[RMDB]
RNA sequence: GGGAACGACUCGAGUAGAGUCGAAAACACAUUAUUGGUGCUAGUAGGAGACAUAAUGAAAACAGUUAAAUGAAAUCCACAGCGAGUAUACUGAUUAACCAGUACUGUCAAAUUUCUCAUACCUAUUGAAUUUUAACUACUGACAAAAUGAGCAGUAGACUUUAAUGUACUUCGGUACAUUAAAGUCAAAAGAAACAACAACAACAAC
Reactivity to 2A3 in 0.01 (KOAc 150mM, MgCl2 10mM, bicine 150mM(pH8.5), 24C), signal-to-noise 4, nucleotides 027 to 156: c060a010c010a040u050u110a050u030u110g030g000u050g030c030u020a070g000u020a050g020g040a020g020a020c040a060u150a060a090u140g070a080a070a060a070c080a060g050u080u160a040a100a080u050g010a110a070a020u030c010c010a030c030a050g030c050g030a020g040u080a060u030a150c020u030g090a160u100u050a070a030c020c000a000g040u030a010c020u010g030u080c030a090a080a160u030u100u000c020u010c000a070u070a170c020c010u100a130u120u120g020a060a080u090u060u080u120a040a010c010u040a010c000u020g030a030c010a040a240a080a130u190g040a100g030c000a000g030u080a040
Reactivity to DMS in 0.01 (KOAc 150mM, MgCl2 10mM, bicine 150mM(pH8.5), 24C), signal-to-noise 2, nucleotides 027 to 156: c050a190c060a050u000u000a020u000u000g000g040u010g010c030u000a200g040u010a050g020g020a210g000a070c090a030u000a070a080u010g000a110a120a050a070c050a060g010u000u010a010a020a090u000g010a090a160a120u000c030c190a190c070a050g020c050g030a230g000u000a090u000a080c000u020g000a120u000u010a120a100c120c040a080g020u000a010c000u000g030u010c040a010a300a090u000u000u000c000u010c030a170u020a120c060c020u000a060u010u000g050a140a170u010u010u000u000a030a130c020u000a020c000u020g020a180c070a070a060a080a130u000g000a100g000c010a050g010u000a110

This 207-nucleotide RNA was probed chemically with 2A3 and DMS. Reactivities are rounded to 0.1 and cut off at 0 and 3. The 2A3 profile rests on 1,964 reads. The RNA was probed in 150 mM KOAc, 10 mM MgCl2 and 150 mM bicine (pH 8.5) at 24 C. For 2A3 the reverse transcriptase was SuperScript II with manganese.